[RMDB]
RNA sequence: GGGAACGACUCGAGUAGAGUCGAAAAUUUGAGUAUGGUUGGUUUGGGAUACUUGAACUAAUUGAUCAUGCAUUUGCCUUGGGUAAGUAAUCAUUCCAAGCGAAUUGGUUACCACUGAUGUUAUGUGCUUAUGCAGUAGUAGUAAUGGAGAGUACAAGCCGUUUUAUGGAUUCGUCCAUAAAACGGCAAAAGAAACAACAACAACAAC
Reactivity to 2A3 in 0.01 (KOAc 150mM, MgCl2 10mM, bicine 150mM(pH8.5), 24C), signal-to-noise 1, nucleotides 027 to 156: u010u060u100g030a010g020u110a130u170g020g010u040u000g020g030u040u090u110g020g000g090a060u080a070c030u060u100g070a070a000c040u130a090a050u140u090g070a010u100c020a030u090g020c010a030u030u000u090g030c000c030u060u120g060g030g000u030a000a110g020u000a070a030u040c000a000u010u000c030c000a200a000g050c100g060a010a040u050u120g050g000u000u000a000c000c010a040c010u040g030a050u010g030u160u080a020u140g030u110g000c020u070u000a000u010g000c030a000g000u070a000g000u000a000g020u000a050a050u080g050g000a030g000a010g010u090a030c010a080a030
Structure probing data (2A3) for a 207-nucleotide construct.
The data come from the RNA Mapping Database (RMDB), library OK3TST.
For 2A3, 555 sequencing reads were counted.